[RMDB]
RNA sequence: GGGAACGACUCGAGUAGAGUCGAAAAGAUAUGGACUAACAGCAACAGCUACUGGAUCGGAAACGAUCCAGGUAGACAUGCUGGUGUCCUAAGUCAAAACACAAUUGACCUUCGGGUCAAUUGUGAAGUAAUUUUACUUGUUCGCAAGUAAAAUUACAAAAGAAACAACAACAACAAC
Reactivity to DMS in 0.01 (KOAc 150mM, MgCl2 10mM, bicine 150mM(pH8.5), 24C), signal-to-noise 8, nucleotides 027 to 126: g000a030u000a210u000g000g000a010c000u000a130a120c000a010g010c010a030a170c300a130g000c000u000a020c000u010g000g010a010u010c000g010g010a050a030a100c010g010a000u000c000c010a000g000g010u000a010g000a110c150a130u000g010c000u000g010g000u010g010u000c000c000u000a010a090g000u000c020a080a070a130a200c010a000c000a010a000u000u000g000a010c010c000u000u010c210g040g010g000u000c000a000a000u000u000g010u000g000a010a090
Reactivity to 2A3 in 0.01 (KOAc 150mM, MgCl2 10mM, bicine 150mM(pH8.5), 24C), signal-to-noise 5, nucleotides 027 to 126: g010a000u030a010u060g000g000a000c020u110a300a150c170a000g000c010a010a130c040a290g180c020u010a010c000u010g000g010a000u000c000g010g000a020a020a010c010g000a000u000c010c000a010g000g000u010a000g040a130c070a060u030g000c000u000g000g020u020g000u000c000c000u010a030a000g030u010c010a030a040a160a090c000a000c000a000a020u000u010g000a010c000c000u040u080c300g120g000g000u010c000a000a000u010u000g000u000g000a010a010
This 177-nucleotide RNA was probed chemically with DMS and 2A3. The reactions ran in a buffer of 150 mM KOAc, 10 mM MgCl2 and 150 mM bicine (pH 8.5), at 24 C. Reactivities are given for positions 27 through 126.